Record summary:
Chemical mapping of a 177-nucleotide RNA with 2A3 and DMS.
[RMDB]
RNA sequence: GGGAACGACUCGAGUAGAGUCGAAAACGGCAGCGACCUCGCGGGCCAAUCGGCCUUCCCGGUAACGGCGGCGAAGCCCGGCCGCGGUCGACCGGGCGGACUGAAGCCCAAGUCCGACCCCGAGUUCAAAUUGAAUUACGUUCGCGUAAUUCAAUUUAAAAGAAACAACAACAACAAC
Reactivity to 2A3 in 0.01 (KOAc 150mM, MgCl2 10mM, bicine 150mM(pH8.5), 24C), signal-to-noise 5, nucleotides 027 to 126: c010g040g010c030a050g040c020g040a150c030c040u090c040g060c030g000g000g000c020c020a040a070u060c030g080g010c010c000u080u130c030c000c000g000g000u060a070a010c010g060g000c010g000g000c030g050a120a020g060c010c030c000g050g000c020c010g000c010g020g040u070c050g030a030c010c000g000g010g010c010g010g000a040c000u020g030a070a020g030c000c000c000a010a010g020u030c010c010g070a160c020c000c010c010g060a060g070u070u110c060
Reactivity to DMS in 0.01 (KOAc 150mM, MgCl2 10mM, bicine 150mM(pH8.5), 24C), signal-to-noise 7, nucleotides 027 to 126: c060g000g000c070a160g010c020g000a070c090c110u020c030g030c120g000g000g010c010c040a120a060u020c070g000g000c010c010u010u020c080c000c000g000g000u030a160a060c020g000g030c270g000g010c010g020a050a140g020c020c000c020g020g010c060c010g010c060g000g020u000c080g000a060c030c010g000g000g000c170g000g000a020c010u000g000a080a110g000c030c010c010a130a030g000u000c010c010g010a280c040c000c000c040g000a100g000u020u010c110

Annotation
It was measured as part of the RMDB library OK1LIB.